Chemical mapping of a 177-nucleotide RNA with 2A3 and DMS.
RNA sequence: GGGAACGACUCGAGUAGAGUCGAAAAACUGACCUGACGCUGAAUAGUGGCGCAACCAUUAACUUCAGCCAUGAAGAUGGCGAACCAUGGCAAACGCUCACCAUCAAUGAAGAUUAUGUAGGCAACGCCGUCGAGGUGAUUUCGAUCACCUCGACGGAAAAGAAACAACAACAACAAC
Reactivity to 2A3 in 0.01 (KOAc 150mM, MgCl2 10mM, bicine 150mM(pH8.5), 24C), signal-to-noise 3, nucleotides 027 to 126: a000c030u050g060a020c030c020u030g010a020c060g000c030u020g030a130a020u120a090g030u030g020g000c090g000c050a050a030c000c000a040u120u010a100a010c020u000u070c030a060g000c000c020a000u090g060a020a040g160a120u080g020g000c010g030a000a000c000c000a020u050g000g010c050a070a040a000c050g010c000u080c070a060c000c050a030u080c010a070a220u120g160a070a040g010a040u070u050a080u210g050u110a050g010g000c030a050a050c090g000
Reactivity to DMS in 0.01 (KOAc 150mM, MgCl2 10mM, bicine 150mM(pH8.5), 24C), signal-to-noise 1, nucleotides 027 to 126: a050c150u000g120a080c040c130u000g060a120c090g000c040u000g010a160a090u000a130g010u000g000g000c050g040c060a160a110c150c020a010u000u000a060a020c300u000u000c040a020g070c020c000a000u000g050a120a050g000a060u010g000g010c070g020a050a050c130c090a060u050g000g000c000a000a000a090c080g000c020u000c000a040c000c070a230u000c040a110a020u020g000a050a050g000a040u000u000a050u000g000u020a080g000g010c060a090a000c020g000
Conditions: 150 mM KOAc, 10 mM MgCl2 and 150 mM bicine (pH 8.5), 24 C.
The 2A3 profile rests on 1,552 reads.
Reactivities are given for positions 27 through 126.